[RMDB]
RNA sequence: GGGAACGACUCGAGUAGAGUCGAAAAUAUCUCGUUCGCGAGAUACAAACGGGGUCGGACUUGGACCAAAGGACUUCGAGGAUCCUGAAGCCUCCACGGGGGAGAAGACCUUUGCUAGUCCGACGGAGGCACCCUACACCAGCAAUUCGUUGCUGAAACAAUUUACAGAUUUCGAUCUGUAAAUUGUAAAAGAAACAACAACAACAAC
Reactivity to DMS in 0.01 (KOAc 150mM, MgCl2 10mM, bicine 150mM(pH8.5), 24C), signal-to-noise 2, nucleotides 027 to 156: u000a010u000c000u000c010g040u000u010c300g070c030g030a020g020a060u000a000c010a060a080a110c060g010g000g040g020u000c000g100g000a130c010u020u010g020g010a120c230c030a010a080a050g000g010a160c020u000u000c000g030a180g030g010a110u000c020c000u010g010a090a160g010c020c000u000c000c060a300c050g040g020g040g060g060a130g000a050a070g000a080c000c000u000u000u000g080c060u000a110g020u000c020c010g070a040c060g020g000a080g050g040c020a110c010c010c020u010a090c080a150c000c010a100g000c050a040a130u000u000c100g000u000u000g000c000u030g000a150a130
Reactivity to 2A3 in 0.01 (KOAc 150mM, MgCl2 10mM, bicine 150mM(pH8.5), 24C), signal-to-noise 2, nucleotides 027 to 156: u080a010u000c000u010c010g000u050u070c280g020c020g120a000g010a010u060a060c060a020a220a020c070g070g000g020g010u000c010g000g020a020c010u090u200g070g030a110c140c000a020a010a000g020g000a050c000u010u010c020g040a220g020g000a030u020c000c000u050g050a160a050g080c040c040u030c050c020a080c030g010g000g000g000g000a030g010a010a000g030a040c000c000u000u010u000g040c030u020a000g010u000c000c000g000a010c000g010g000a000g010g000c030a050c020c020c010u070a050c050a070c080c010a020g010c020a010a090u140u160c170g070u100u030g000c010u010g020a120a110